[RMDB]
RNA sequence: GGGAACGACUCGAGUAGAGUCGAAAACGCAUGCGAAAGCAUGCGGCUAUGCUAAUGCAUAGUGACCGCCUUUUUGCACACAUCGCGGGCUAUCGCCUUGUUAUUGGUGAUAGCGUUUCCUCAUAGACUUGUUAUUGUCUGUGCAGGUAGUGUGCCAAUCGAUAUCGUGAUUCGUCACGAUAUCGAUAAAAGAAACAACAACAACAAC
Reactivity to DMS in 0.01 (KOAc 150mM, MgCl2 10mM, bicine 150mM(pH8.5), 24C), signal-to-noise 2, nucleotides 027 to 156: c010g000c020a000u000g020c000g000a200a120a290g000c010a010u010g010c000g010g000c000u000a050u000g020c000u010a120a150u000g040c000a000u000a000g010u000g010a200c020c030g030c060c020u000u000u000u000u000g010c020a070c020a050c160a060u000c090g060c060g050g020g000c010u000a010u000c010g040c010c000u000u010g030u000u000a150u020u000g020g030u010g030a030u000a030g010c010g020u000u000u000c000c010u000c030a070u010a070g010a040c050u000u010g030u000u000a100u010u000g010u010c010u010g030u000g000c080a040g000g000u000a080g050u000g000u000g010c020c130a110
Reactivity to 2A3 in 0.01 (KOAc 150mM, MgCl2 10mM, bicine 150mM(pH8.5), 24C), signal-to-noise 5, nucleotides 027 to 156: c000g030c000a000u000g000c000g070a100a000a020g010c000a000u000g000c000g010g000c000u010a000u000g000c020u180a300a110u300g010c000a000u000a000g000u010g090a050c000c020g020c000c020u080u170u030u120u180g000c010a000c000a010c010a060u120c100g010c020g050g040g000c000u000a000u010c000g030c000c000u110u110g190u300u210a300u150u170g000g000u040g010a000u000a000g000c000g000u010u050u000c000c000u000c010a010u010a020g000a010c000u050u130g120u300u230a230u190u190g000u000c010u000g030u010g000c070a010g020g000u070a070g000u010g000u000g000c000c010a010